RNA sequence: GGGAACGACUCGAGUAGAGUCGAAAAGGUUCGAGUCUCGCUUUCGAUCCCUCGAUCUGCCACGUCUGUUCGAAGAGUAGUCUUCGUGGCAACUGGCAGUUAAACCGUGUAGUACCGAUGGAGGUUGGAAACAAUGCACAUCACUACCGGGUCUUGGCACAAAUACUACCUUCGGGUAGUAUUUGUGAAAAGAAACAACAACAACAAC
Reactivity to 2A3 in 0.01 (KOAc 150mM, MgCl2 10mM, bicine 150mM(pH8.5), 24C), signal-to-noise 3, nucleotides 027 to 156: g100g000u040u060c010g030a050g100u050c030u030c050g030c080u060u070u080c030g020a030u020c020c020c010u010c040g070a080u040c000u000g000c010c010a040c160g020u020c140u060g010u040u010c010g000a010a010g020a020g100u300a110g110u070c010u010u000c010g050u110g050g000c000a000a000c010u000g000g000c020a000g010u010u140a100a080a010c020c000g050u080g000u170a020g000u030a090c060c150g010a020u020g010g060a150g090g060u000u010g010g010a040a030a010c010a010a030u140g110c070a020c010a050u010c010a000c010u010a010c000c000g010g020g010u000c030u040u040g040g000
Reactivity to DMS in 0.01 (KOAc 150mM, MgCl2 10mM, bicine 150mM(pH8.5), 24C), signal-to-noise 1, nucleotides 027 to 156: g030g050u000u000c010g000a070g020u000c030u000c040g010c130u000u000u000c040g010a140u000c030c000c010u020c040g000a130u010c010u010g010c010c010a030c170g000u010c050u010g030u000u000c030g000a030a030g000a070g020u000a130g010u000c010u000u000c020g030u000g000g000c000a040a020c030u000g020g010c000a050g010u000u000a060a100a100c020c050g000u010g000u010a030g020u000a150c060c090g030a100u000g020g010a110g020g010u000u000g020g010a270a150a180c040a040a090u010g030c060a170c020a020u000c020a230c020u000a030c020c000g020g020g000u010c030u000u000g010g050